[RMDB]
RNA sequence: GGGAACGACUCGAGUAGAGUCGAAAAGAUAGCAGUAACGUUUUCAGUUUUAUGAGGUAAAGCGAAUGAUUAGAGGCCUUGGGGUUGAAACAACCUUAACCUAUUCUCAAACUUUAAAUAUGUAAGAUCUACACGACAAUUUCGAUUGUCGUGUAGAAAAAGAAACAACAACAACAAC
Reactivity to DMS in 0.01 (KOAc 150mM, MgCl2 10mM, bicine 150mM(pH8.5), 24C), signal-to-noise 2, nucleotides 027 to 126: g050a100u010a090g000c040a070g040u010a060a080c050g000u010u000u010u000c000a090g010u000u020u000u000a040u010g010a080g000g030u010a040a040a080g010c030g000a050a080u010g000a010u000u030a030g030a100g000g020c130c070u010u000g000g010g020g000u000u020g010a140a090a090c040a010a040c080c010u000u000a030a080c060c040u030a050u010u010c060u000c020a060a090a100c110u000u020u000a040a070a080u020a110u020g010u030a050a090g010a170
Reactivity to 2A3 in 0.01 (KOAc 150mM, MgCl2 10mM, bicine 150mM(pH8.5), 24C), signal-to-noise 3, nucleotides 027 to 126: g080a030u180a050g030c060a050g010u130a060a090c060g000u030u020u070u040c040a050g010u000u030u140u080a110u120g080a030g060g130u150a070a000a000g040c040g030a090a050u060g030a010u110u050a010g020a010g100g000c050c010u020u040g000g000g010g010u000u050g030a110a070a040c050a030a010c000c000u010u000a010a020c000c000u010a070u080u020c020u000c000a070a090a030c040u040u190u280a110a160a050u250a120u180g020u070a050a030g000a020